Source: RMDB library 15KLIB, as collected in RNAgym. An RNA of 170 nucleotides, treated with DMS and 2A3 and read out base by base. The reactions ran in a buffer of 150 mM KOAc, 10 mM MgCl2 and 150 mM bicine (pH 8.5), at 24 C. Reactivities are rounded to 0.1 and cut off at 0 and 3. 2A3 adducts were read by reverse transcription with SuperScript II with manganese. The DMS profile rests on 42,388 reads. DMS adducts were read by reverse transcription with MarathonRT. 2A3 is a SHAPE reagent: it acylates the 2'-hydroxyl of flexible nucleotides of all four kinds. The 2A3 profile rests on 28,618 reads.
[RMDB]
RNA sequence: GGGAACGACUCGAGUAGAGUCGAAAAGGGAUCGGUGCCGAGUGAGGCUUAUCCCGGGGGGAUUGCCUCGGCCCCCUCCCUAACACGGGAGUCUCGGGCCCCCUCCCAGGAAUGGAGACGGGGGGAAGUAGAAGCUUGUUCGCAAGCUUCAAAAGAAACAACAACAACAAC
Reactivity to DMS in 0.01 (KOAc 150mM, MgCl2 10mM, bicine 150mM(pH8.5), 24C), signal-to-noise 6, nucleotides 027 to 129: g010g010g000a030u030c080g000g000u050g030c000c020g040a090g040u040g010a080g030g040c070u020u020a050u020c000c000c000g030g060g020g040g050g010a050u020u040g020c000c050u020c000g000g000c000c000c000c090c040u000c000c000c000u030a080a090c240a120c210g000g000g040a040g000u000c000u040c020g000g000g020c020c020c040c010c030u000c030c010c030a000g020g050a130a100u000g000g000a110g030a080c170g020g030g020g020g020g020a020a030g070u080a130
Reactivity to 2A3 in 0.01 (KOAc 150mM, MgCl2 10mM, bicine 150mM(pH8.5), 24C), signal-to-noise 9, nucleotides 027 to 129: g070g000g010a060u120c080g060g060u090g060c010c000g000a010g020u160g030a040g020g030c060u100u130a050u040c000c000c000g020g000g010g020g000g020a050u050u110g010c010c000u010c000g010g000c000c010c000c000c020u010c000c000c010u070a120a030c090a020c070g010g000g000a020g040u010c010u020c000g040g000g000c000c010c000c010c000u000c000c010c010a010g060g080a090a110u150g030g000a150g040a080c100g000g000g000g000g000g000a040a010g020u110a030